[RMDB]
RNA sequence: GGGAACGACUCGAGUAGAGUCGAAAAUACUCGACUACCAUCGCCAAGCUCAUCGUACAGAUCGCGCACUUGAGUGAUCGUAUCAUCAGGAAAGAGAUCGCUAAGCAGGGUGGUUUGCGCGCGAUAAACAUAUGGAGCACUUCGGUGCUCCAUAUGUAAAAGAAACAACAACAACAAC
Reactivity to DMS in 0.01 (KOAc 150mM, MgCl2 10mM, bicine 150mM(pH8.5), 24C), signal-to-noise 3, nucleotides 027 to 126: u020a120c080u000c020g020a080c080u000a060c050c050a030u010c020g020c020c040a030a120g010c090u010c040a050u000c080g010u010a130c110a110g010a010u000c010g020c030g030c050a270c080u000u010g030a090g000u000g000a010u010c110g000u010a300u000c010a080u000c120a120g000g000a050a070a100g010a070g000a030u000c030g030c040u010a070a080g000c060a080g000g010g030u010g010g020u000u000u000g030c070g000c020g000c030g010a070u010a050a060
Reactivity to 2A3 in 0.01 (KOAc 150mM, MgCl2 10mM, bicine 150mM(pH8.5), 24C), signal-to-noise 1, nucleotides 027 to 126: u110a020c030u000c000g030a000c010u150a080c030c030a060u030c030g000c030c020a050a030g020c020u040c060a050u030c020g040u070a060c020a040g020a000u020c020g000c030g010c020a050c060u000u080g120a040g050u040g000a030u010c020g000u100a030u060c050a010u060c030a010g040g230a060a130a030g060a020g000a000u010c010g000c040u040a000a050g040c030a060g100g000g010u030g000g070u050u050u090g060c050g000c030g000c050g030a030u070a040a160